[RMDB]
RNA sequence: GGGAACGACUCGAGUAGAGUCGAAAAGAUAUGGAGUUUCGAGGAUCAACUGCAUCUUUGAUCUCGGAAACGAGGGAGAUGUGGUUGGGAGAAACUCCUAAGUCAAACCGCACCUUCGGGUGCGGAAGGACUAAAGAAGGUUCGCCUUCUUUAGUCCAAAAGAAACAACAACAACAAC
Reactivity to DMS in 0.01 (KOAc 150mM, MgCl2 10mM, bicine 150mM(pH8.5), 24C), signal-to-noise 3, nucleotides 027 to 126: g000a040u000a300u000g000g000a020g010u010u000u010c010g000a080g010g010a060u020c010a000a010c010u010g000c010a000u010c000u000u000u010g010a080u020c010u010c010g000g000a110a070a180c000g000a020g010g000g010a010g000a010u000g040u010g000g020u000u000g000g000g010a080g000a010a010a010c000u000c000c000u000a010a080g000u000c020a090a150a170c000c000g000c000a010c000c000u000u010c180g020g010g020u000g010c010g000g000a030a020
Reactivity to 2A3 in 0.01 (KOAc 150mM, MgCl2 10mM, bicine 150mM(pH8.5), 24C), signal-to-noise 4, nucleotides 027 to 126: g010a010u080a060u160g010g000a010g000u030u000u010c100g050a300g050g010a040u010c000a000a010c000u020g000c010a020u020c020u130u300u140g140a170u090c010u010c000g040g020a090a070a030c010g000a000g000g020g010a010g000a000u010g010u030g000g000u020u000g010g000g000a040g010a000a000a000c000u000c000c000u000a050a010g000u000c020a010a050a070c000c000g000c010a000c000c010u030u080c300g180g000g000u010g000c010g000g010a000a050
Structure probing data (DMS and 2A3) for a 177-nucleotide construct. For 2A3, 10,852 sequencing reads were counted. Values cover nucleotides 27 to 126. It was measured as part of the RMDB library TTRDEL. The reactions ran in a buffer of 150 mM KOAc, 10 mM MgCl2 and 150 mM bicine (pH 8.5), at 24 C. For DMS the reverse transcriptase was MarathonRT.